[RMDB]
RNA sequence: GGGAACGACUCGAGUAGAGUCGAAAAGAUAUGGAGACGUCCAACAGCCCAGGUAUCGGAAACGAUACUGGGACAUGGACGUUUCCUAAGUCAAAGGUAGGUAUAACCUUCGGGUUAUACCUACCAACUGCUAUACAUCGUUCGCGAUGUAUAGCAGAAAAGAAACAACAACAACAAC
Reactivity to 2A3 in 0.01 (KOAc 150mM, MgCl2 10mM, bicine 150mM(pH8.5), 24C), signal-to-noise 2, nucleotides 027 to 126: g010a010u020a010u060g000g000a000g000a000c000g000u000c000c000a050a060c080a280g080c010c000c000a040g300g100u040a000u000c000g020g000a020a010a000c000g000a000u000a010c000u000g010g000g120a160c020a040u000g000g000a000c000g000u000u000u000c000c000u010a000a000g010u000c020a100a060a110g000g000u000a010g050g010u010a010u000a000a000c010c020u070u140c300g020g000g000u000u000a000u010a000c000c000u000a000c000c000a000a000
Reactivity to DMS in 0.01 (KOAc 150mM, MgCl2 10mM, bicine 150mM(pH8.5), 24C), signal-to-noise 3, nucleotides 027 to 126: g000a010u000a220u010g000g000a030g010a010c010g020u000c000c010a020a160c300a150g000c000c000c000a030g030g010u010a010u000c000g020g000a060a030a110c010g020a010u000a010c000u000g000g000g000a050c100a100u000g000g000a020c000g010u000u010u000c000c000u010a010a050g000u000c010a090a110a140g000g010u000a000g030g000u000a000u000a000a000c000c000u000u010c180g030g030g000u000u000a010u000a000c000c000u010a000c000c000a020a030